[RMDB]
RNA sequence: GGGAACGACUCGAGUAGAGUCGAAAAAAAUCGUGAAAAGCAAGAGAGAAGAGUCCCAGUUAUUCUUGCUGCCUUUGAUAAGUGAAUUUAGGGCAACUACUAGUGCCAGUAGGCAUGGGGGAUCUACCGAUGAAGAAGACACAAAGUCUCCGCUCUAGGUAUAUUACCGUUUCGACGGUAAUAUACCAAAAGAAACAACAACAACAAC
Reactivity to DMS in 0.01 (KOAc 150mM, MgCl2 10mM, bicine 150mM(pH8.5), 24C), signal-to-noise 1, nucleotides 027 to 156: a090a280a080u000c050g020u020g000a110a090a130a060g010c010a080a060g000a110g030a160g010a080a180g030a110g010u000c000c040c020a220g000u000u010a060u010u000c010u000u000g030c010u010g000c010c030u000u000u000g030a050u010a080a110g100u020g020a080a140u010u010u000a060g000g000g010c000a040a020c010u000a060c040u000a090g040u000g000c000c010a190g000u010a100g050g000c010a020u000g030g000g010g100g010a090u000c030u000a090c000c030g000a080u020g030a060a140g030a090a040g040a090c030a050c030a090a030a260g060u000c010u000c000c050g030c000u000c010u000a190
Reactivity to 2A3 in 0.01 (KOAc 150mM, MgCl2 10mM, bicine 150mM(pH8.5), 24C), signal-to-noise 2, nucleotides 027 to 156: a000a000a000u150c050g010u060g040a050a100a030a020g000c010a010a000g070a000g010a010g030a060a050g050a060g060u040c000c010c020a000g010u030u080a040u050u000c020u020u020g000c010u020g000c010c000u090u060u090g080a130u210a190a100g020u120g120a120a190u070u080u140a060g000g010g010c000a060a020c040u130a010c030u060a040g050u000g040c050c030a070g040u100a100g070g010c020a020u090g000g020g020g000g000a000u000c000u080a080c000c070g020a040u140g020a000a020g020a090a030g030a060c040a010c020a130a100a070g020u030c020u010c090c040g060c020u030c020u060a020